[RMDB]
RNA sequence: GGGAACGACUCGAGUAGAGUCGAAAACUAGGCGCGUACCUGAUCUGGUACAGAUGCGCGAGCUGGCCCUGAUCGGAUCUGUCUAUGCGCUCGGCGCGAGUACUGGCCGCGAGCUGUAGGCGCAGUAGCUGAAGGUGACAUUCGUGUCACCUUCAGCAAAAGAAACAACAACAACAAC
Reactivity to DMS in 0.01 (KOAc 150mM, MgCl2 10mM, bicine 150mM(pH8.5), 24C), signal-to-noise 2, nucleotides 027 to 126: c070u040a090g000g020c030g030c070g010u000a040c030c000u010g010a090u010c090u000g020g010u020a080c020a080g010a050u000g010c030g010c050g010a080g010c040u010g010g000c070c030c000u000g000a060u010c100g010g010a090u000c050u000g020u020c050u000a070u000g020c030g000c030u000c110g000g000c010g020c060g010a130g010u020a050c100u000g000g000c050c030g000c060g010a110g010c000u010g010u020a080g000g010c030g010c050a060g010u000a120
Reactivity to 2A3 in 0.01 (KOAc 150mM, MgCl2 10mM, bicine 150mM(pH8.5), 24C), signal-to-noise 2, nucleotides 027 to 126: c010u020a040g080g050c000g000c030g030u000a000c010c020u040g060a150u120c090u160g060g040u150a020c010a000g070a080u230g040c030g010c030g020a010g070c030u060g030g010c000c000c000u010g040a090u050c060g040g030a050u050c020u020g070u000c000u040a080u070g010c090g020c000u030c070g130g030c030g010c000g040a020g040u100a170c120u120g100g000c040c010g030c020g000a040g010c020u050g040u070a080g000g050c040g000c010a020g030u070a050
This 177-nucleotide RNA was probed chemically with DMS and 2A3. The reactions ran in a buffer of 150 mM KOAc, 10 mM MgCl2 and 150 mM bicine (pH 8.5), at 24 C. For 2A3, 1,666 sequencing reads were counted. High 2A3 reactivity points to a flexible backbone, as in loops and unpaired stretches. 2A3 adducts were read by reverse transcription with SuperScript II with manganese.